The data come from the RNA Mapping Database (RMDB), library TTRDEL. Structure probing data (2A3 and DMS) for a 177-nucleotide construct.
[RMDB]
RNA sequence: GGGAACGACUCGAGUAGAGUCGAAAAGAUAUGGAUUCCGAGUUCGAAGAACCUACCCACCUACUCGGAAACGAGUAGAGGGGGAGAACGAGGAAUCCUAAGUCAAAGUUAUGGUUCGCCAUAACAAUCAUGUUAUAUGCUUCGGCAUAUAACAUGAAAAAGAAACAACAACAACAAC
Reactivity to 2A3 in 0.01 (KOAc 150mM, MgCl2 10mM, bicine 150mM(pH8.5), 24C), signal-to-noise 3, nucleotides 027 to 126: g010a000u020a020u050g000g010a010u000u000c000c010g010a030g010u010u020c100g080a250a130g100a300a240c050c090u100a060c010c050c000a040c020c000u000a000c000u000c000g010g000a010a010a000c000g000a000g000u000a000g030a120g000g000g010g000g040a300g000a020a000c000g010a010g000g000a000a000u000c000c000u000a000a010g010u000c030a150a040a080g000u010u010a010u010g030g050u020u070c270g020c080c000a000u000a010a010c020a000a120
Reactivity to DMS in 0.01 (KOAc 150mM, MgCl2 10mM, bicine 150mM(pH8.5), 24C), signal-to-noise 6, nucleotides 027 to 126: g010a010u000a060u010g000g000a020u000u000c000c000g010a300g010u000u000c010g020a140a150g020a130a120c190c130u010a150c010c000c000a040c040c000u000a010c000u000c000g010g000a010a010a020c010g010a020g020u000a010g000a090g010g010g000g000g000a050g000a010a010c000g010a300g010g000a010a000u000c000c000u000a010a080g000u000c010a110a120a110g010u000u000a000u000g000g000u000u000c260g000c000c000a000u000a010a010c000a160a160
The 2A3 profile rests on 12,859 reads. 2A3 adducts were read by reverse transcription with SuperScript II with manganese. The RNA was probed in 150 mM KOAc, 10 mM MgCl2 and 150 mM bicine (pH 8.5) at 24 C.